An RNA of 207 nucleotides, treated with DMS and 2A3 and read out base by base.
DMS adducts were read by reverse transcription with MarathonRT.
Values cover nucleotides 27 to 156.
RNA sequence: GGGAACGACUCGAGUAGAGUCGAAAACACCGGUACGUAAUACCCAGCCUUAGUCUUGUUCUCCCCGAAGCCAUGAUUACAGAGUUGAGCCCCGAAGCCCGUCGGAGGCGGGGGUUACAGAGCCGGUUGAGAACAAUCUUGUGCGUGAGCAUCGUGCACAGCAACAAUGUUUCGACAUUGUUGCUGUAAAAGAAACAACAACAACAAC
Reactivity to DMS in 0.01 (KOAc 150mM, MgCl2 10mM, bicine 150mM(pH8.5), 24C), signal-to-noise 2, nucleotides 027 to 156: c050a080c030c000g020g030u000a150c110g020u000a060a090u000a150c000c010c010a100g000c000c020u000u020a070g020u000c030u010u010g020u010u000c000u020c000c100c020c030g050a090a130g020c110c010a070u020g010a200u000u000a130c130a110g000a150g030u000u000g000a140g000c020c000c030c020g010a140a110g000c020c010c020g030u000c050g000g020a010g020g060c020g000g030g000g040g010u010u000a040c000a160g020a300g050c000c000g010g030u000u000g050a130g010a070a090c040a040a070u020c030u010u000g020u020g000c010g030u050g020a180g000c040a080u000c040g000u000g000c120
Reactivity to 2A3 in 0.01 (KOAc 150mM, MgCl2 10mM, bicine 150mM(pH8.5), 24C), signal-to-noise 2, nucleotides 027 to 156: c060a010c020c020g000g000u070a040c060g000u020a060a040u190a300c000c000c000a020g000c010c020u040u110a080g020u040c040u050u080g020u120u010c010u000c120c050c010c000g090a020a010g030c020c010a050u050g000a020u110u180a070c070a060g080a000g130u110u090g040a030g010c010c000c000c010g030a040a030g070c010c030c000g100u040c030g070g040a050g000g000c010g000g000g010g020g000u010u000a010c030a020g110a000g100c040c000g020g000u020u040g040a010g000a030a000c010a020a070u060c070u090u050g000u010g020c040g040u110g060a060g070c010a060u170c020g060u050g020c060